[RMDB]
RNA sequence: GGGAACGACUCGAGUAGAGUCGAAAAUGGCAGUAGCGCAUGCUGGUGGACCGCUGCCGGCGCAUGCUUUGGAGAAUGCGGGUGUGUCUGGUACAGCAGUGGCCUGAGACAGUUCCUGUGUGGGGCGCCUAACCGAGGAGUUCGCUCCUCGGUUAGGAAAAGAAACAACAACAACAAC
Reactivity to DMS in 0.01 (KOAc 150mM, MgCl2 10mM, bicine 150mM(pH8.5), 24C), signal-to-noise 1, nucleotides 027 to 126: u010g010g010c020a060g020u010a050g020c060g010c040a100u010g020c030u000g020g000u000g010g000a080c080c100g030c020u000g010c040c030g010g020c060g010c070a040u010g010c050u010u020u000g010g020a140g010a100a030u010g010c050g010g020g000u010g010u010g020u010c050u000g020g040u000a070c100a070g010c040a050g010u000g000g000c020c030u000g000a160g000a060c070a110g010u000u000c030c010u010g020u010g020u010g010g000g030g000c270g000